[RMDB]
Background: Conditions: 150 mM KOAc, 10 mM MgCl2 and 150 mM bicine (pH 8.5), 24 C. This 177-nucleotide RNA was probed chemically with DMS and 2A3. For DMS, 16,075 sequencing reads were counted. For DMS the reverse transcriptase was MarathonRT.
RNA sequence: GGGAACGACUCGAGUAGAGUCGAAAACAAAUUGGACAGCGAGGGUGUCUCGCGUACCCUGCGAGACGGCGCCGGCCUGAAGAGUAACCUCAACCCGAUAGUCGCCUUAGGCAGCUUCGCCGCCAAGAUAUUACGCGUAUUUCGAUACGCGUAAUAUAAAAGAAACAACAACAACAAC
Reactivity to DMS in 0.01 (KOAc 150mM, MgCl2 10mM, bicine 150mM(pH8.5), 24C), signal-to-noise 6, nucleotides 027 to 126: c110a040a130a120u020u010g000g000a100c080a110g010c010g010a060g000g010g010u020g000u000c010u010c030g000c010g000u050a090c100c100c070u050g000c000g000a020g000a020c030g010g000c030g030c030c040g000g020c050c040u000g000a090a070g000a100g000u010a080a100c110c020u010c060a070a090c070c010c010g000a090u020a070g000u000c030g000c020c010u010u020a090g000g010c020a100g010c040u010u000c050g010c020c030g000c020c010a050a060g010
Reactivity to 2A3 in 0.01 (KOAc 150mM, MgCl2 10mM, bicine 150mM(pH8.5), 24C), signal-to-noise 9, nucleotides 027 to 126: c040a000a090a080u120u080g040g050a050c040a040g010c020g040a050g030g100g060u140g010u020c010u010c010g010c000g010u130a150c000c000c030u040g000c000g010a010g010a010c020g020g030c040g010c000c020g030g020c010c020u090g040a100a030g060a020g080u110a080a110c020c020u050c040a050a090c010c000c020g040a050u070a070g060u070c020g020c000c000u070u060a060g040g010c010a020g040c020u050u050c040g000c010c000g010c010c010a040a010g070
The 2A3 profile rests on 13,977 reads. For 2A3 the reverse transcriptase was SuperScript II with manganese.